This 177-nucleotide RNA was probed chemically with DMS and 2A3. The 2A3 profile rests on 51,089 reads. DMS adducts were read by reverse transcription with MarathonRT. The reactions ran in a buffer of 150 mM KOAc, 10 mM MgCl2 and 150 mM bicine (pH 8.5), at 24 C. The DMS profile rests on 61,387 reads. For 2A3 the reverse transcriptase was SuperScript II with manganese. High 2A3 reactivity points to a flexible backbone, as in loops and unpaired stretches. It was measured as part of the RMDB library OK1LIB. In probing experiments dimethyl sulfate is read out at A N1 and C N3, which are open when not base-paired.

RNA sequence: GGGAACGACUCGAGUAGAGUCGAAAACUGCACUCGCUCUGCCCGAAGCUGUGUUGUGUGGGGAGAACCGACGGAGAGAUCGGUUGAAGAUGGUGCAACUGAGUAUGCGAGAGCAUUUGAAUGCAGGGCCUAUACGGUCCUUCGGGAUCGUAUGGGCAAAAGAAACAACAACAACAAC
Reactivity to DMS in 0.01 (KOAc 150mM, MgCl2 10mM, bicine 150mM(pH8.5), 24C), signal-to-noise 9, nucleotides 027 to 126: c030u000g000c020a050c050u010c040g000c010u000c030u010g000c040c040c030g000a110a100g010c040u010g010u010g010u000u010g010u010g020u000g000g000g000g010a140g000a030a030c030c000g000a050c090g000g020a130g010a190g010a110u000c010g000g010u000u000g010a080a080g010a090u010g010g010u010g000c040a050a060c040u010g000a090g010u010a040u010g000c020g000a110g000a120g010c020a080u000u010u030g000a060a070u000g000c030a030g000g000
Reactivity to 2A3 in 0.01 (KOAc 150mM, MgCl2 10mM, bicine 150mM(pH8.5), 24C), signal-to-noise 9, nucleotides 027 to 126: c010u010g000c000a010c020u030c030g000c000u010c010u040g040c000c010c020g050a050a020g010c040u040g020u010g010u180u030g020u010g020u070g030g040g020g000a080g030a030a000c000c000g010a010c010g070g040a080g010a010g010a270u010c000g000g000u000u020g010a030a020g050a050u130g020g040u060g000c000a010a010c010u050g020a010g050u090a050u120g030c030g030a030g000a010g020c010a040u090u100u190g080a080a030u030g000c010a010g020g070